[RMDB]
RNA sequence: GGGAACGACUCGAGUAGAGUCGAAAAAGCUGCUCAGUAUACGUACUGAGCAGCAAGGGGUUGAAGCGGACACCCCUUCAGGCGCGCGCCCAAGCUCCGUACCCCGCCUCAUACGUGAGGCGGCGAAAUAGGUGUAUCUGGUUCGCCAGAUACACAAGUACAAUACCAUCUUCGGAUGGUAUUGUACAAAAGAAACAACAACAACAAC
Reactivity to DMS in 0.01 (KOAc 150mM, MgCl2 10mM, bicine 150mM(pH8.5), 24C), signal-to-noise 1, nucleotides 027 to 156: a070g000c000u000g010c010u000c000a030g020u000a060u010a090c230g050u010a020c010u000g040a060g000c000a000g010c000a000a010g010g000g040g020u000u000g000a090a150g030c000g000g020a090c010a080c030c000c010c040u000u010c050a030g010g000c050g000c060g000c090g040c040c020c030a170a120g020c010u000c030c010g010u000a140c060c040c000c000g000c020c010u000c010a160u000a060c210g010u010g030a030g010g020c000g030g000c060g000a080a080a090u010a140g030g000u010g020u010a000u010c000u000g000g020u000u030c300g000c000c000a000g000a020u000a010c010a000c000a020a100
Reactivity to 2A3 in 0.01 (KOAc 150mM, MgCl2 10mM, bicine 150mM(pH8.5), 24C), signal-to-noise 3, nucleotides 027 to 156: a010g000c000u000g000c000u000c010a000g010u020a010u010a110c200g040u010a010c010u000g010a000g000c000a000g000c000a000a000g020g030g000g000u040u120g180a190a030g030c010g010g010a010c000a000c000c000c010c000u040u130c030a010g020g000c040g010c050g010c040g010c090c020c020a000a000g030c070u000c020c000g030u040a040c020c010c000c020g000c000c000u000c010a030u040a070c230g100u030g020a000g010g000c020g000g000c020g100a010a010a020u240a060g100g030u000g000u000a000u010c000u000g010g030u020u050c090g050c080c000a000g000a000u000a010c000a000c000a000a020
Conditions: 150 mM KOAc, 10 mM MgCl2 and 150 mM bicine (pH 8.5), 24 C. Chemical mapping of a 207-nucleotide RNA with DMS and 2A3. Source: RMDB library M2RFPK, as collected in RNAgym. Reactivities are given for positions 27 through 156. DMS adducts were read by reverse transcription with MarathonRT.